[RMDB]
RNA sequence: GGGAACGACUCGAGUAGAGUCGAAAAGCAGUAUCUCGUUAGGCGAGGCUCCUAUAGAAACACAGGUUGCUGAUCUGACGACGUCGAGAGACGCCCAAGAUUAGGACAGGAUAUAUCGAACCAAGGUGAACCUGUCCAGGGUUCGCCCUGGACAGAACUAAUGGACAAUGUUCGCAUUGUCCAUUAGAAAAGAAACAACAACAACAAC
Reactivity to 2A3 in 0.01 (KOAc 150mM, MgCl2 10mM, bicine 150mM(pH8.5), 24C), signal-to-noise 6, nucleotides 027 to 156: g050c040a000g020u100a140u070c040u030c040g050u090u170a090g050g080c030g030a030g020g020c020u030c020c000u110a090u050a160g120a040a120a010c090a020c040a100g090g010u070u140g090c020u020g010a010u000c010u050g010a030c030g010a010c000g010u010c020g010a010g000a000g000a130c000g000c000c010c000a020a000g010a020u030u060a010g020g050a010c040a050g030g070a020u060a020u010a030u190c090g060a040a040c030c020a060a030g080g020u060g030a050a040c010c000u000g000u000c010c000a000g020g010g020u040u040c160g080c020c000c010u000g000g000a000c000a000g000a000a020
Reactivity to DMS in 0.01 (KOAc 150mM, MgCl2 10mM, bicine 150mM(pH8.5), 24C), signal-to-noise 3, nucleotides 027 to 156: g010c050a090g010u000a100u010c030u000c050g010u000u000a090g000g050c050g010a110g010g030c030u000c010c010u010a140u010a090g000a110a100a100c110a090c070a150g000g000u010u000g030c020u000g010a080u010c020u000g000a190c010g010a010c000g000u000c010g000a300g000a300g000a030c020g000c000c040c070a200a080g000a060u000u000a030g000g010a060c030a110g020g010a130u000a070u000a060u000c020g000a070a090c010c030a060a130g020g020u000g000a050a100c110c000u010g020u000c030c010a010g010g000g030u000u000c300g010c020c010c010u010g000g000a030c030a020g000a050a160
Conditions: 150 mM KOAc, 10 mM MgCl2 and 150 mM bicine (pH 8.5), 24 C. The record gives the reactivity of an RNA of 207 nucleotides to 2A3 and DMS. 2A3 adducts were read by reverse transcription with SuperScript II with manganese. DMS adducts were read by reverse transcription with MarathonRT. It was measured as part of the RMDB library M2RFPK.